[RMDB]
RNA sequence: GGGAACGACUCGAGUAGAGUCGAAAACCGUAGGUCUCCUACCCACCGAAAGUCCCAGCAAUGAUGUGGCUUUCGAAAGAGAGCCAUUGAGCUGGGUCUUCGAGGGAGACCUAAACGGAAAGACGCACAGAUACUGUUCGCAGUAUCUGUGCGUCAAGUGAUUAUAGACGUUCGCGUCUAUAAUCACAAAAGAAACAACAACAACAAC
Reactivity to DMS in 0.01 (KOAc 150mM, MgCl2 10mM, bicine 150mM(pH8.5), 24C), signal-to-noise 1, nucleotides 027 to 156: c000c020g050u010a030g020g010u000c020u000c000c000u010a080c070c040c040a300c120c000g020a020a010a080g000u000c000c010c000a000g000c030a090a090u010g000a020u000g010u000g010g000c000u000u000u010c010g010a070a130a300g000a040g000a010g010c000c000a030u000u000g000a050g000c000u000g020g020g000u000c010u000u000c010g010a150g020g010g000a010g010a010c010c000u000a000a020a060c040g000g000a050a110a090g020a030c000g030c020a000c010a010g000a030u010a000c000u010g000u000u000c300g030c040a040g000u020a000u000c000u000g020u000g000c000g010u010c000a010a060
Reactivity to 2A3 in 0.01 (KOAc 150mM, MgCl2 10mM, bicine 150mM(pH8.5), 24C), signal-to-noise 3, nucleotides 027 to 156: c010c010g010u000a000g010g010u010c000u010c010c010u070a200c070c060c030a050c030c010g070a110a070a030g020u030c010c010c000a010g000c010a020a300u130g020a020u070g040u000g010g010c000u000u010u010c000g020a020a060a010g010a000g000a000g000c000c000a010u020u020g010a000g000c000u000g000g000g000u030c000u000u000c000g010a050g010g010g000a000g000a000c000c000u000a020a050a000c010g020g030a120a080a060g000a000c000g000c010a000c000a010g000a000u000a010c010u010g060u110u140c230g010c160a000g010u000a000u000c000u000g000u000g010c010g000u000c000a000a010